About this RNA
Chemical mapping of a 207-nucleotide RNA with 2A3. The RNA was probed in 150 mM KOAc, 10 mM MgCl2 and 150 mM bicine (pH 8.5) at 24 C.

RNA sequence: GGGAACGACUCGAGUAGAGUCGAAAACAUCCUCGGAUAGGGUGCUCAUGGUCUCUGAAGACAUACUAGCGUUACUCCAGUCCACAUUGGCGGGGGGGACGACCAGGGGAACGGGGGAUCCCACCCAGAUACCAACUCCCGGAAUGGGUGGAGAAAAUACAUACGCCAUAUUCGUAUGGCGUAUGUAAAAAGAAACAACAACAACAAC
Reactivity to 2A3 in 0.01 (KOAc 150mM, MgCl2 10mM, bicine 150mM(pH8.5), 24C), signal-to-noise 2, nucleotides 027 to 156: c020a020u020c010c010u010c050g000g060a070u110a100g010g030g030u040g000c020u040c050a050u140g040g000u050c040u040c080u020g070a120a020g010a060c060a060u160a100c050u050a040g040c030g110u070u040a070c010u010c000c030a030g060u000c040c000a100c020a170u040u210g040g000c060g020g000g000g000g000g000g000a010c070g020a010c000c100a070g000g000g000g000a020a080c090g010g000g010g000g000a000u030c020c000c020a000c000c000c000a030g030a050u150a080c020c030a060a060c090u150c110c070c080g000g000a030a040u030g000g010g010u030g000g010a120g000a010a030a000a010